[RMDB]
RNA sequence: GGGAACGACUCGAGUAGAGUCGAAAAAUGACUAUUUUGAGAUGAACUUGGAAGAUAGGUUGAGGUUGUUAUGUGAAAAGCAGAAUUCAAAUCUAUGUAUGGUUACUGAUUCAUCCACAUUUCUUCUUGAGCUAUGUCUUUUGGAAGCAAAGAUAUGUCCAUGCUCUGUAUUCGUACAGAGCAUGGAAAAAGAAACAACAACAACAAC
Reactivity to DMS in 0.01 (KOAc 150mM, MgCl2 10mM, bicine 150mM(pH8.5), 24C), signal-to-noise 2, nucleotides 027 to 156: a050u000g020a120c030u000a120u000u010u010u010g010a150g010a050u000g020a060a050c030u010u000g020g000a050a030g000a050u000a030g000g000u000u010g010a090g020g020u000u010g010u000u010a040u000g030u000g010a080a050a070a100g020c040a040g020a080a070u010u010c080a080a070a130u000c010u000a110u000g020u000a100u000g000g030u000u000a120c050u000g010a110u000u000c000a110u000c020c020a060c060a090u000u000u000c020u000u000c030u000u000g010a020g020c060u020a060u000g010u000c010u000u000u000u010g010g010a140a080g020c060a050a010a070g000a060u000a040u000g010
Reactivity to 2A3 in 0.01 (KOAc 150mM, MgCl2 10mM, bicine 150mM(pH8.5), 24C), signal-to-noise 3, nucleotides 027 to 156: a000u080g010a020c060u060a040u080u140u110u110g130a140g010a020u120g070a050a110c040u110u080g050g040a110a060g000a090u080a050g080g000u000u050g030a090g000g010u070u030g010u040u030a040u040g080u010g020a070a090a040a000g030c040a010g060a050a030u110u030c040a020a040a120u070c090u140a090u150g070u020a060u080g070g030u000u060a070c020u030g000a050u000u070c010a030u040c030c000a050c000a030u090u150u060c000u080u000c020u030u050g010a000g000c010u080a090u140g020u130c030u000u090u100u020g090g080a020a060g000c060a040a110a000g000a020u000a060u050g040